[RMDB]
RNA sequence: GGGAACGACUCGAGUAGAGUCGAAAAGAUAUGGAUAGGUAUCGAGGAGCGUCCACGAUGAAACCUUAUUCGGAAACGAAUAAGGUUUCAUUAGACGCUCUCCCCACCGAUAACCUAUCCUAAGUCACCUGAGUAUCUAGUUCGCUAGAUACUCAGGAAAAGAAACAACAACAACAAC
Reactivity to DMS in 0.01 (KOAc 150mM, MgCl2 10mM, bicine 150mM(pH8.5), 24C), signal-to-noise 3, nucleotides 027 to 126: g010a070u010a300u000g000g000a020u000a000g010g010u000a020u000c010g010a180g020g000a020g020c000g070u000c000c300a080c300g030a040u000g010a010a000a000c000c000u000u000a010u010u000c000g020g000a110a090a200c000g010a010a010u000a010a000g030g020u000u000u000c000a030u010u000a130g000a040c020g010c010u000c000u010c030c010c000c010a300c100c000g000a020u000a080a070c000c010u000a000u000c000c000u000a010a120g010u010c060a260

Conditions: 150 mM KOAc, 10 mM MgCl2 and 150 mM bicine (pH 8.5), 24 C. This 177-nucleotide RNA was probed chemically with DMS. For DMS the reverse transcriptase was MarathonRT.